[RMDB]
Conditions: 150 mM KOAc, 10 mM MgCl2 and 150 mM bicine (pH 8.5), 24 C.
The record gives the reactivity of an RNA of 177 nucleotides to DMS and 2A3.
For 2A3, 3,938 sequencing reads were counted.
As a SHAPE reagent, 2A3 marks flexible, mostly unpaired nucleotides at the ribose 2'-OH.
2A3 adducts were read by reverse transcription with SuperScript II with manganese.
RNA sequence: GGGAACGACUCGAGUAGAGUCGAAAAGAAGGGCGGACAACUGGCGUUGCAGCGCUGUCUCGUCCUCGAUGGCCAGGCCGUCGUGGCUGUUCGCCAGGACCCUCGCCGCCACCGGGUUCGGCGCCAAGCCCUGACUAAAUUUCGAUUUAGUCAGGGCAAAAGAAACAACAACAACAAC
Reactivity to DMS in 0.01 (KOAc 150mM, MgCl2 10mM, bicine 150mM(pH8.5), 24C), signal-to-noise 4, nucleotides 027 to 126: g010a100a100g020g010g030c020g010g000a060c060a070a080c090u000g000g000c050g020u000u010g020c110a130g010c050g000c080u000g000u010c050u010c070g020u000c030c020u000c020g000a060u000g010g010c020c120a150g000g000c040c060g010u000c060g010u010g010g010c020u000g010u000u000c060g000c010c020a060g010g000a090c040c030c040u000c080g000c010c020g000c030c020a060c060c060g010g000g010u000u010c030g020g000c020g020c120c070a110a120
Reactivity to 2A3 in 0.01 (KOAc 150mM, MgCl2 10mM, bicine 150mM(pH8.5), 24C), signal-to-noise 3, nucleotides 027 to 126: g120a040a030g030g000g000c010g000g000a030c030a200a090c050u050g050g040c040g100u130u220g010c050a030g020c040g010c060u030g010u060c040u040c040g030u020c020c010u000c010g040a080u080g030g000c060c080a080g080g030c030c020g040u080c070g030u060g050g000c020u030g090u060u070c020g000c000c010a000g010g030a040c010c000c000u020c020g030c000c010g020c000c000a050c030c030g030g000g050u030u060c020g030g000c040g000c020c000a020a050